[RMDB]
RNA sequence: GGGAACGACUCGAGUAGAGUCGAAAAGACGUAAUCCGCGCAAAUCCACAAACGCCAACGAUGAGCGUUUCGCUGUAGCCGCUUAAGGCAACAGCCGGGGCCGCCUGAGCCCUGUUACAAAAGACGGGAAACUCGAUGCCAUUCGUGGCAUCGAGAAAGUCCCUAAAGUAUUCGUACUUUAGGGACUAAAAGAAACAACAACAACAAC
Reactivity to DMS in 0.01 (KOAc 150mM, MgCl2 10mM, bicine 150mM(pH8.5), 24C), signal-to-noise 1, nucleotides 027 to 156: g000a090c010g000u000a100a110u010c030c040g000c050g000c050a070a100a120u000c000c010a070c100a030a300a000c010g040c010c020a090a120c140g000a200u010g010a100g010c070g050u000u000u000c040g010c020u020g020u000a100g020c000c010g010c300u010u000a130a100g000g040c020a020a030c010a030g000c010c050g040g000g000g020c040c030g020c060c040u000g010a200g030c010c000c010u030g000u000u000a130c090a050a070a070a150g000a100c070g030g000g000a070a060a160c000u010c000g020a020u000g020c030c000a050u000u000c230g040u000g000g020c000a000u020c000g000a010g010a000a040
Reactivity to 2A3 in 0.01 (KOAc 150mM, MgCl2 10mM, bicine 150mM(pH8.5), 24C), signal-to-noise 5, nucleotides 027 to 156: g060a020c010g020u030a070a070u090c060c040g020c010g000c070a070a050a110u080c060c040a080c060a090a040a020c030g010c020c020a160a090c160g160a190u170g040a040g030c010g000u020u050u080c050g000c000u000g000u030a030g020c000c010g110c180u230u260a120a070g000g000c010a020a000c000a000g010c000c000g000g000g000g000c010c030g030c000c020u020g000a010g020c000c000c000u010g080u110u050a020c030a010a050a000a010g100a050c020g000g010g030a040a040a020c000u000c000g000a000u000g000c000c010a020u050u050c150g060u040g010g000c000a000u000c000g000a000g000a000a000
This 207-nucleotide RNA was probed chemically with DMS and 2A3. DMS adducts were read by reverse transcription with MarathonRT. Source: RMDB library M2RFPK, as collected in RNAgym. For 2A3, 4,327 sequencing reads were counted. The reactions ran in a buffer of 150 mM KOAc, 10 mM MgCl2 and 150 mM bicine (pH 8.5), at 24 C.